[RMDB]
RNA sequence: GGGAACGACUCGAGUAGAGUCGAAAAAGGGACGAUGAGAACGCAAUCUCUCACCCAAGUUAUGAGAGUUCGGAAGGAUAGUGGUCUAGUAUAUAAGUGCUCGUCCUCCUCGUAAACAGGGCUGCGGACGCACUCCUAAGUUCGCUUAGGAGUGCGUAAAAGAAACAACAACAACAAC
Reactivity to 2A3 in 0.01 (KOAc 150mM, MgCl2 10mM, bicine 150mM(pH8.5), 24C), signal-to-noise 4, nucleotides 027 to 126: a000g070g010g010a030c060g060a070u160g030a010g020a050a010c060g010c080a060a100u020c000u000c000u000c040a070c020c030c000a050a000g090u150u100a090u120g020a010g000a010g040u060u120c040g060g030a060a020g030g000a040u060a090g170u100g050g020u020c020u020a040g130u010a080u010a010u030a210a080g080u060g060c010u010c020g010u040c020c000u000c000c000u040c010g070u110a020a120a000c020a030g000g080g000c010u020g010c030g040g030
Reactivity to DMS in 0.01 (KOAc 150mM, MgCl2 10mM, bicine 150mM(pH8.5), 24C), signal-to-noise 3, nucleotides 027 to 126: a060g000g000g030a040c060g010a080u010g010a050g020a030a070c090g000c190a140a080u030c040u000c000u000c020a090c050c030c090a070a080g000u050u030a090u010g000a030g020a070g000u030u010c030g020g030a080a070g020g010a070u000a080g010u030g000g040u000c050u000a140g000u000a030u020a010u000a070a030g070u020g000c050u010c020g010u010c020c010u010c000c000u000c050g040u030a020a060a050c100a020g000g010g000c050u000g000c010g000g000